[RMDB]
RNA sequence: GGGAACGACUCGAGUAGAGUCGAAAACUCUUCCUAGGUCCGGAAUCAACCUCCAUCUGAUCUGUCCGGAGCUUUUUCGGCGGAGGAGCUCCCUCCCCGUCCUUCCCUUUUCUUAUUAUUCCGAGGAGUAGCUUAAAUACUUCGGUAUUUAAGCUACAAAAGAAACAACAACAACAAC
Reactivity to DMS in 0.01 (KOAc 150mM, MgCl2 10mM, bicine 150mM(pH8.5), 24C), signal-to-noise 2, nucleotides 027 to 126: c030u000c030u000u010c000c000u010a100g010g020u000c010c020g010g000a060a060u010c070a060a110c100c020u010c040c100a110u020c090u000g010a070u020c130u010g010u010c040c060g000g000a020g020c060u000u010u000u020u010c050g020g000c120g020g000a020g000g000a090g010c110u010c030c000c010u000c030c000c020c030g000u000c060c020u010u000c010c020c010u000u000u000u000c040u020u000a080u010u000a140u000u000c030c050g010a120g010g010a210
Reactivity to 2A3 in 0.01 (KOAc 150mM, MgCl2 10mM, bicine 150mM(pH8.5), 24C), signal-to-noise 1, nucleotides 027 to 126: c000u000c000u010u030c000c000u030a050g050g060u000c010c020g020g050a030a080u090c030a040a090c000c030u020c040c020a110u000c070u070g050a050u040c050u100g080u020c030c060g000g000a030g020c010u100u090u000u000u130c000g010g000c040g050g000a000g040g000a040g040c020u030c040c000c000u010c000c000c010c000g060u040c000c000u050u030c020c000c000u060u100u040u030c040u050u010a070u070u010a050u140u050c060c010g020a040g020g010a030